[RMDB]
RNA sequence: GGGAACGACUCGAGUAGAGUCGAAAAGUGCCUCGUCGGCCCGGCAUGCCAACCUGAUCCGAAGUCCAAGGUGGUUUCUCUGGCCUUCCAGAGAGAUGCGCGUCGGAAGAACCGACGAACAAACCUUAAAACAAAACGACGUUCGCGUCGUUUUGAACGACAGUAUGACGUUCGCGUCAUACUGUCGAAAAGAAACAACAACAACAAC
Reactivity to 2A3 in 0.01 (KOAc 150mM, MgCl2 10mM, bicine 150mM(pH8.5), 24C), signal-to-noise 3, nucleotides 027 to 156: g060u040g040c010c010u030c000g010u000c010g010g000c000c020c000g020g000c010a030u080g030c030c020a080a090c040c010u040g030a080u090c040c080g140a120a020g080u020c050c050a060a000g020g000u010g030g000u010u070u010c000u000c010u010g010g020c040c070u230u180c000c000a000g000a000g010a000g020a060u090g060c060g000c000g020u000c000g010g010a100a060g020a070a110c000c000g010a000c000g030a040a020c040a020a050a020c000c020u140u230a050a130a050a060c000a000a000a010a000c020g030a000c010g000u060u090c220g000c010g120u000c000g010u000u000u000u000g000a010a000
Reactivity to DMS in 0.01 (KOAc 150mM, MgCl2 10mM, bicine 150mM(pH8.5), 24C), signal-to-noise 1, nucleotides 027 to 156: g030u000g000c100c030u000c030g050u010c000g010g020c030c000c020g040g020c020a150u000g000c080c070a100a040c030c020u020g000a100u010c040c110g010a190a100g000u000c030c050a100a110g000g000u000g060g000u010u000u000c000u000c000u000g010g010c260c170u000u040c010c020a010g020a040g000a050g000a040u000g020c000g000c050g020u010c000g000g020a140a090g030a080a090c000c010g000a050c020g000a050a120c000a050a080a080c010c010u040u040a090a080a180a160c010a000a030a030a000c000g000a000c000g050u000u010c300g010c010g020u010c000g010u000u010u010u010g010a060a200
An RNA of 207 nucleotides, treated with 2A3 and DMS and read out base by base. Reactivities are given for positions 27 through 156. Source: RMDB library M2RFPK, as collected in RNAgym. The reactions ran in a buffer of 150 mM KOAc, 10 mM MgCl2 and 150 mM bicine (pH 8.5), at 24 C. DMS adducts were read by reverse transcription with MarathonRT.